[RMDB]
RNA sequence: GGGAACGACUCGAGUAGAGUCGAAAAGCCCAGAAGCCUCCCCUCAAAAUCGUUUCAGUCCAAAAUUGAUUCGGCGGCCCUGUCAUGAGGCCGAAACGAAGGUACGUACCCCUUCGAAUGGCGUCGGAACUUUCAGUCGUAUUCGUACGACUGAAAAACGUAUACAACUAUUCGUAGUUGUAUACGUAAAAGAAACAACAACAACAAC
Reactivity to DMS in 0.01 (KOAc 150mM, MgCl2 10mM, bicine 150mM(pH8.5), 24C), signal-to-noise 4, nucleotides 027 to 156: g010c010c000c020a140g010a130a140g050c020c020u000c020c010c000c020u000c040a080a080a110a100u000c040g030u000u000u000c020a070g050u000c030c080a060a070a170a170u010u000g010a100u000u000c010g020g030c030g020g020c020c010c000u030g020u000c120a100u010g010a060g000g030c010c000g010a020a040a070c030g010a040a020g010g030u000a300c070g000u000a230c060c020c010c010u010u010c030g000a050a110u000g010g010c040g000u000c020g000g010a070a130c090u010u010u000c000a010g000u000c000g040u000a040u000u000c230g030u000a010c000g020a040c000u010g000a000a010a020a090
Reactivity to 2A3 in 0.01 (KOAc 150mM, MgCl2 10mM, bicine 150mM(pH8.5), 24C), signal-to-noise 3, nucleotides 027 to 156: g020c020c000c000a060g230a120a030g090c010c040u040c030c000c030c030u040c040a060a110a000a030u040c010g010u000u000u040c030a050g010u080c080c070a080a110a090a090u050u040g020a040u060u000c010g010g010c000g000g000c000c010c010u010g010u020c020a060u050g020a020g020g000c000c000g040a010a000a000c000g000a000a010g020g020u080a030c110g110u110a070c040c010c010c010u000u000c000g010a010a010u020g010g010c000g020u090c050g060g030a030a040c030u020u000u000c010a010g010u000c000g000u000a010u010u080c090g030u020a000c010g000a000c000u010g000a000a000a000a010
The record gives the reactivity of an RNA of 207 nucleotides to DMS and 2A3. The reactions ran in a buffer of 150 mM KOAc, 10 mM MgCl2 and 150 mM bicine (pH 8.5), at 24 C. It was measured as part of the RMDB library M2RFPK. The DMS profile rests on 8,397 reads.